The data come from the RNA Mapping Database (RMDB), library OK3TST.
Chemical mapping of a 207-nucleotide RNA with DMS and 2A3.
DMS (dimethyl sulfate) methylates the pairing face of unpaired adenines and cytosines.
The DMS profile rests on 20,341 reads.
The 2A3 profile rests on 11,549 reads.
RNA sequence: GGGAACGACUCGAGUAGAGUCGAAAAGACGUGGAGGUUCCGCGCCCUCCUUUGCGCGUAAGUACGUCGAAAUUCGGUGCUUGGGAUCGCACCGUUAGAUCCAUUUGAUAUCCGCUUUGUGCCGCGGUUGGGCAUUUACACUUACCCGAAAGGGGAAAUAUUAUAUCGUGUUCGCACGAUAUAAUAUAAAAGAAACAACAACAACAAC
Reactivity to DMS in 0.01 (KOAc 150mM, MgCl2 10mM, bicine 150mM(pH8.5), 24C), signal-to-noise 5, nucleotides 027 to 156: g010a050c030g020u000g010g010a090g020g010u000u000c040c040g030c040g000c140c030c030u000c040c020u010u000u000g010c020g020c030g020u010a060a110g020u000a050c060g020u010c030g000a080a080a180u000u000c010g010g030u000g010c020u000u000g020g020g010a160u000c140g010c020a080c020c020g040u000u000a070g000a120u000c040c030a200u010u000u000g010a170u010a130u000c030c010g000c040u000u000u000g020u010g020c040c030g010c060g050g000u000u000g010g020g020c040a060u000u010u000a080c100a090c070u000u000a180c020c010c000g010a070a100a200g000g010g000g000a030a060
Reactivity to 2A3 in 0.01 (KOAc 150mM, MgCl2 10mM, bicine 150mM(pH8.5), 24C), signal-to-noise 8, nucleotides 027 to 156: g020a010c020g010u040g020g060a070g000g110u130u060c040c000g000c010g010c010c010c010u130c010c030u060u100u110g030c030g000c010g030u050a050a060g050u040a050c030g010u010c030g040a030a030a050u090u050c000g010g000u010g000c020u050u120g100g040g050a060u090c020g000c000a010c010c000g000u010u030a030g010a050u040c020c020a070u070u060u170g110a080u080a070u110c030c030g020c050u070u080u120g070u070g040c040c040g030c030g040g000u060u040g040g000g000c010a000u050u050u090a040c070a020c020u050u110a040c000c020c010g030a060a030a020g020g000g000g000a020a140